[RMDB]
RNA sequence: GGGAACGACUCGAGUAGAGUCGAAAAAGUGUCUAAAAUGUUAGCCUCAAUAAUACUUCGACGUCUGACUAGAGCCCGUGAAGAACAAACCCAAGAAAAACAGGCUAGUUUUAGAUCUGGACGUGGAGAGCGACUGGAUAUUCGUAUCCAGUCGCUCAAAAGAAACAACAACAACAAC
Reactivity to 2A3 in 0.01 (KOAc 150mM, MgCl2 10mM, bicine 150mM(pH8.5), 24C), signal-to-noise 1, nucleotides 027 to 126: a000g100u160g000u000c000u060a000a000a000a090u130g090u110u000a000g000c050c050u090c000a050a190u160a210a000u060a160c010u000u070c000g020a030c000g010u000c000u070g070a160c000u010a000g000a000g070c000c120c190g020u030g110a060a040g060a080a100c110a010a000a090c020c170c000a240a000g270a020a030a000a000a000c010a010g030g060c000u000a040g000u000u000u000u030a100g070a100u000c060u030g010g000a030c020g090u050g000g180a110